An RNA of 207 nucleotides, treated with 2A3 and read out base by base.

RNA sequence: GGGAACGACUCGAGUAGAGUCGAAAACGUCAGUGACAGCCAUCCCUACGGGAUACACUGAGGGGUGCCCGCUGUGAACCACCACGGACCGGAUGUGCCACGGGCCUGAAGUUGCCAGCACAAUGACGCCUUCGACCUCGGCAGGUACGAUCACGUGCUGGAGGAAAGAUUUCGAUCUUUCCUCCAGAAAAGAAACAACAACAACAAC
Reactivity to 2A3 in 0.01 (KOAc 150mM, MgCl2 10mM, bicine 150mM(pH8.5), 24C), signal-to-noise 1, nucleotides 027 to 156: c090g100u090c050a070g010u010g130a070c010a020g000c040c010a020u010c010c000c000u060a270c090g010g060g000a140u110a250c180a040c060u020g020a010g060g020g000g020u010g000c060c050c020g000c020u010g030u080g010a090a060c070c000a000c000c000a010c010g020g010a000c020c020g060g000a090u110g040u060g090c010c010a080c070g040g000g010c000c080u160g010a020a000g050u060u120g050c040c030a040g000c080a050c050a130a150u200g040a030c070g030c000c010u000u010c030g000a020c000c000u030c020g000g110c070a030g020g010u030a050c040g040a060u030c040a070c260g000u100g010

The data come from the RNA Mapping Database (RMDB), library OK3TST. 2A3 adducts were read by reverse transcription with SuperScript II with manganese. For 2A3, 778 sequencing reads were counted.